[RMDB]
RNA sequence: GGGAACGACUCGAGUAGAGUCGAAAACGCCUCGGCAGCCCUGUGUACUGCCUGCAUCUCACCACCAAGCAUCUCUAUGCUGCGCUGUCUUACAACCUCCACGUCCUGGAUAUUCAAAACCCGUGACGAGGUUAAGAUAUUUCGAUAUCUUAACCUCAAAAGAAACAACAACAACAAC
Reactivity to 2A3 in 0.01 (KOAc 150mM, MgCl2 10mM, bicine 150mM(pH8.5), 24C), signal-to-noise 6, nucleotides 027 to 126: c040g020c000c020u030c030g030g000c020a020g030c010c030c050u070g040u030g010u070a070c030u040g020c000c000u020g010c000a060u020c020u010c040a050c040c000a020c010c010a060a020g020c010a060u010c030u000c040u240a050u130g040c020u040g010c040g000c030u030g040u050c020u050u110a070c040a080a080c010c010u020c010c010a040c020g020u020c020c000u020g040g000a050u030a090u110u100c040a040a070a080a120c010c010c010g050u050g020a030c070
Reactivity to DMS in 0.01 (KOAc 150mM, MgCl2 10mM, bicine 150mM(pH8.5), 24C), signal-to-noise 9, nucleotides 027 to 126: c180g010c040c060u000c130g010g010c030a070g010c060c030c060u010g020u000g020u000a090c050u000g010c040c020u010g000c060a070u000c040u000c040a090c060c040a080c070c060a080a090g010c050a040u000c100u010c090u010a060u000g010c030u000g010c080g010c050u000g010u010c030u000u000a080c100a070a100c050c020u000c020c020a060c060g000u000c020c020u010g000g010a080u010a080u000u000c100a060a050a090a100c020c010c010g010u010g010a170c160

Overview:
Chemical mapping of a 177-nucleotide RNA with 2A3 and DMS. The reactions ran in a buffer of 150 mM KOAc, 10 mM MgCl2 and 150 mM bicine (pH 8.5), at 24 C.